[RMDB]
RNA sequence: GGGAACGACUCGAGUAGAGUCGAAAAUCACCAGAUGCUGCAUCACCUGAUCACUGAUGGCUCAACGGUAUCCGGCGGUACAACUGAAUACGUGUAGCUGCCUUUUGAGCGGGUUGGCUGCAAUCCGAAAAGAGGACACACUUCGGUGUGUCCUCAACCCAACAGUAUCCUUCGGGAUACUGUUGGGAAAAGAAACAACAACAACAAC
Reactivity to 2A3 in 0.01 (KOAc 150mM, MgCl2 10mM, bicine 150mM(pH8.5), 24C), signal-to-noise 2, nucleotides 027 to 156: u070c030a030c040c000a000g020a020u060g000c030u010g010c000a010u010c010a020c000c000u030g010a080u010c010a000c020u020g030a030u050g040g050c040u020c080a030a060c020g060g050u030a040u000c030c010g030g040c100g000g140u170a040c020a090a060c120u110g030a130a080u100a050c060g030u030g000u080a010g010c000u020g000c010c010u040u030u030u050g050a020g030c030g010g000g000u190u200g060g000c000u010g050c000a020a120u090c000c030g080a040a050a100a000g000a020g010g010a000c000a000c000a000c000u050u110c250g000g000u000g000u000g000u030c000c010u000c000a000a000
About this RNA:
An RNA of 207 nucleotides, treated with 2A3 and read out base by base. Reactivities are rounded to 0.1 and cut off at 0 and 3. For 2A3 the reverse transcriptase was SuperScript II with manganese.